[RMDB]
RNA sequence: GGGAACGACUCGAGUAGAGUCGAAAAUGGUCAACCAGUUGGCACCGGAAGUGAAGAAGGCAUACCAGCUGUUGGCGCCGGAAUCGCGAUCGGCGUCUAUCGGUUAUCGGGCCAGCAUGGAUGUAACCUCUGAUCCAAGGUUCGCCUUGGAUCAGAGAAAAGAAACAACAACAACAAC
Reactivity to 2A3 in 0.01 (KOAc 150mM, MgCl2 10mM, bicine 150mM(pH8.5), 24C), signal-to-noise 4, nucleotides 027 to 126: u160g070g050u090c010a020a020c000c010a000g010u010u040g080g000c160a300c190c020g050g060a140a050g070u120g110a060a080g060a030a030g130g000c080a100u150a190c070c020a020g050c020u050g060u090u060g000g010c000g000c000c000g060g010a090a120u220c060g030c030g190a110u110c000g000g000c000g040u000c000u000a050u080c020g050g000u020u050a070u060c010g000g030g000c030c000a010g010c020a070u060g000g020a000u050g020u140a070a010c000
Reactivity to DMS in 0.01 (KOAc 150mM, MgCl2 10mM, bicine 150mM(pH8.5), 24C), signal-to-noise 2, nucleotides 027 to 126: u040g000g050u000c000a050a030c030c020a090g010u010u000g000g000c000a110c000c000g050g060a060a040g000u000g000a100a060g030a170a090g020g000c000a150u010a160c270c110a090g000c010u000g000u030u000g040g000c010g000c000c000g000g000a120a030u020c220g040c170g000a030u000c020g030g000c030g030u000c000u000a010u000c050g000g060u000u000a060u000c030g010g030g000c020c000a010g000c010a120u010g000g000a280u000g000u000a100a090c150